[RMDB]
RNA sequence: GGGAACGACUCGAGUAGAGUCGAAAAGAAAGAAAGAUGCAGUUUCAGGCUUUUCCCAACUACACCUAUUAAUACAUAUUUUAACGUCCUAUUAAAGUUGUAGUUUGGAAAGUUUUGGUUUUGCAAAGCAUGGAACCGCAUUCGUGCGGUUCCAUGCAAAAGAAACAACAACAACAAC
Reactivity to 2A3 in 0.01 (KOAc 150mM, MgCl2 10mM, bicine 150mM(pH8.5), 24C), signal-to-noise 2, nucleotides 027 to 126: g030a030a000a000g160a010a060a000g140a050u110g020c030a010g000u000u000u070c000a000g000g000c050u070u040u040u050c000c000c000a000a000c000u030a000c000a010c000c000u060a130u300u000a010a000u020a020c040a080u250a120u000u170u090u030a210a030c180g060u020c010c030u000a020u020u000a070a000a040g000u000u000g000u000a000g010u000u000u000g000g010a010a000a000g000u000u050u150u040g050g040u000u080u040u000g020c040a100a000a000
The record gives the reactivity of an RNA of 177 nucleotides to 2A3. The 2A3 profile rests on 606 reads. The RNA was probed in 150 mM KOAc, 10 mM MgCl2 and 150 mM bicine (pH 8.5) at 24 C. Source: RMDB library RFM100, as collected in RNAgym.